The record gives the reactivity of an RNA of 177 nucleotides to 2A3 and DMS. Reactivities are given for positions 27 through 126. The 2A3 profile rests on 819 reads.
RNA sequence: GGGAACGACUCGAGUAGAGUCGAAAAGGUCGCAUUUCAGUCAGGGCCGCCGUAAUUAGCUAUGUGCACUUCAGGUUGCUGGCAUUCUAAUUCGAGGGCAGUGAAGGGCGCGGGGUUCGUCGCAUGGCAGAUCAGGGGAGUUCGCUCCCCUGAUCUGAAAAGAAACAACAACAACAAC
Reactivity to 2A3 in 0.01 (KOAc 150mM, MgCl2 10mM, bicine 150mM(pH8.5), 24C), signal-to-noise 2, nucleotides 027 to 126: g000g000u040c000g020c080a020u010u080u060c030a010g070u020c030a040g000g050g000c020c000g040c010c050g020u050a000a090u020u120a070g030c120u050a000u050g010u100g040c030a000c050u100u120c040a000g190g010u160u100g000c020u150g040g000c000a010u090u000c000u050a090a000u070u040c050g050a150g020g010g000c040a000g040u060g150a050a110g010g010g010c010g000c000g000g000g030g000u080u020c000g020u040c000g020c090a030u020g020g080
Reactivity to DMS in 0.01 (KOAc 150mM, MgCl2 10mM, bicine 150mM(pH8.5), 24C), signal-to-noise 1, nucleotides 027 to 126: g000g020u000c030g010c040a120u000u010u000c030a050g000u070c100a110g010g000g000c000c010g000c020c020g020u050a090a040u020u020a000g000c050u000a030u000g000u000g000c020a140c080u000u000c180a040g000g000u000u000g060c060u020g000g000c020a040u000u000c060u000a070a060u040u010c040g000a100g030g010g000c020a140g000u010g010a140a070g020g010g000c070g000c020g000g000g010g000u000u030c040g000u000c020g000c050a020u000g000g000
2A3 adducts were read by reverse transcription with SuperScript II with manganese.
2A3 is a SHAPE reagent: it acylates the 2'-hydroxyl of flexible nucleotides of all four kinds.
The reactions ran in a buffer of 150 mM KOAc, 10 mM MgCl2 and 150 mM bicine (pH 8.5), at 24 C.